About this RNA
Structure probing data (2A3 and DMS) for a 207-nucleotide construct. The reactions ran in a buffer of 150 mM KOAc, 10 mM MgCl2 and 150 mM bicine (pH 8.5), at 24 C. 2A3 adducts were read by reverse transcription with SuperScript II with manganese.

RNA sequence: GGGAACGACUCGAGUAGAGUCGAAAAAAGGAAUUAGCGUGCCUUCAUGCUAAGGGUUUGAUAUCUGCUAAAACCCGAUGCAUUCAUCAAUGCAGGUUAAGCCAAAGGGAUGUCCCGACCGGAGGCCAAAAGUUCGCUACGUUCGCGUAGCGAACAAUCUUUUAGCUAGGUUCGCCUAGCUAAAAGAAAAAGAAACAACAACAACAAC
Reactivity to 2A3 in 0.01 (KOAc 150mM, MgCl2 10mM, bicine 150mM(pH8.5), 24C), signal-to-noise 3, nucleotides 027 to 156: a000a020g160g020a080a070u120u060a120g030c060g040u070g020c020c030u150u150c050a050u050g000c000u060a050a070g000g010g000u020u010u010g060a040u070a060u100c030u050g030c010u020a000a040a010a010c000c000c020g020a030u070g010c010a010u080u130c020a090u070c030a070a120u100g010c020a010g100g010u080u110a080a020g010c000c010a010a010a000g010g010g010a050u040g030u010c010c000c000g010a010c010c000g000g000a000g010g020c000c000a010a060a010a030g000u000u000c000g000c000u000a010c020g020u020u040c150g000c010g110u000a010g000c020g010a000a000c000a000a000
Reactivity to DMS in 0.01 (KOAc 150mM, MgCl2 10mM, bicine 150mM(pH8.5), 24C), signal-to-noise 3, nucleotides 027 to 156: a070a070g010g010a110a060u000u000a050g000c070g030u000g020c070c030u000u000c050a060u000g010c030u010a120a180g030g010g030u000u010u000g010a170u000a070u000c040u010g020c040u000a120a020a030a030c000c000c000g010a080u010g010c010a040u000u000c030a070u010c060a130a300u000g020c020a040g010g020u000u010a060a070g030c000c020a020a300a280g010g000g020a080u010g000u010c010c000c000g020a130c030c040g000g010a300g000g030c010c060a060a050a040a090g010u000u000c000g020c010u000a000c000g030u000u010c300g010c060g050u000a010g030c000g010a010a000c000a040a070